[RMDB]
RNA sequence: GGGAACGACUCGAGUAGAGUCGAAAACCUGUUAUCAGACCAAUAACAGAAUGCACCACAGCGUAAAAUCAUCUGAUUGGGUGAGUUGGUCGCACCGCCAUUUGACGAACGAACGCCAAGCCUAAGCACUACGAGUAUGUGUUCGCACAUACUCGAACUAAGUCUAGAUCUUCGGAUCUAGACUUAGAAAAGAAACAACAACAACAAC
Reactivity to 2A3 in 0.01 (KOAc 150mM, MgCl2 10mM, bicine 150mM(pH8.5), 24C), signal-to-noise 7, nucleotides 027 to 156: c010c000u010g030u030u020a040u030c070a030g050a040c020c020a030a030u030a030a000c000a010g080a130a080u150g030c030a030c030c020a030c060a030g040c020g040u090a020a090a090a080u050c020a030u010c040u080g090a220u110u170g060g000g000u020g020a050g020u020u040g020g010u000c010g010c030a020c000c020g070c040c020a070u050u030u140g050a040c040g020a150a030c040g020a060a010c040g050c040c000a050a030g010c010c010u120a100a020g060c060a060c150u170a080c080g000a000g000u000a010u000g020u000g020u040u060c150g020c070a000c000a000u000a000c000u010c000g000a010a000
Reactivity to DMS in 0.01 (KOAc 150mM, MgCl2 10mM, bicine 150mM(pH8.5), 24C), signal-to-noise 4, nucleotides 027 to 156: c070c010u000g020u000u000a030u010c020a080g020a080c050c040a140a080u000a070a100c030a040g010a140a110u000g040c040a070c040c050a050c090a100g020c030g020u000a070a050a110a120u000c040a040u000c030u010g010a120u010u000g020g010g010u010g010a230g030u010u000g010g030u010c040g050c030a050c040c000g030c050c020a160u000u000u010g010a050c040g030a100a080c100g000a090a080c050g020c010c000a060a120g020c020c020u020a050a090g030c050a110c040u000a120c020g000a040g020u010a000u000g040u000g020u010u010c300g000c010a030c000a010u000a010c000u000c000g010a010a090